Structure probing data (DMS and 2A3) for a 177-nucleotide construct.
Conditions: 150 mM KOAc, 10 mM MgCl2 and 150 mM bicine (pH 8.5), 24 C.
RNA sequence: GGGAACGACUCGAGUAGAGUCGAAAAGAUAUGGAAAUAGAGGAGGAGUCCGUAUUCGGAAACGAAAGGACCCUCUACCCACCUAUUUCCUAAGUCAAACAAUUAAGCUGUUCGCAGCUUAAUUGAACACUCAGACAAUCUUCGGAUUGUCUGAGUGAAAAGAAACAACAACAACAAC
Reactivity to DMS in 0.01 (KOAc 150mM, MgCl2 10mM, bicine 150mM(pH8.5), 24C), signal-to-noise 2, nucleotides 027 to 126: g000a000u000a300u010g000g000a010a000a010u000a000g000a150g000g020a010g000g000a190g010u000c020c010g010u010a200u000u000c020g000g020a140a030a180c020g010a010a050a080g000g010a020c000c030c000u010c010u000a000c060c050c110a300c070c000u000a020u000u000u000c000c000u010a040a160g010u000c030a080a060a300c020a040a000u000u000a010a000g000c000u000g000u000u000c160g020c020a010g010c000u000u000a000a000u000u000g000a090a140
Reactivity to 2A3 in 0.01 (KOAc 150mM, MgCl2 10mM, bicine 150mM(pH8.5), 24C), signal-to-noise 1, nucleotides 027 to 126: g090a010u120a090u250g010g000a040a010a010u000a040g020a060g030g000a010g010g070a260g060u000c060c040g090u170a300u060u000c010g050g050a080a080a070c020g000a000a000a050g000g010a010c000c030c020u030c010u020a020c010c000c010a040c000c000u000a000u000u000u030c000c000u020a100a050g080u060c100a190a100a040c010a020a060u020u000a010a000g020c000u010g090u180u220c300g020c230a000g000c020u010u020a020a000u020u000g000a000a010
It was measured as part of the RMDB library TTRDEL.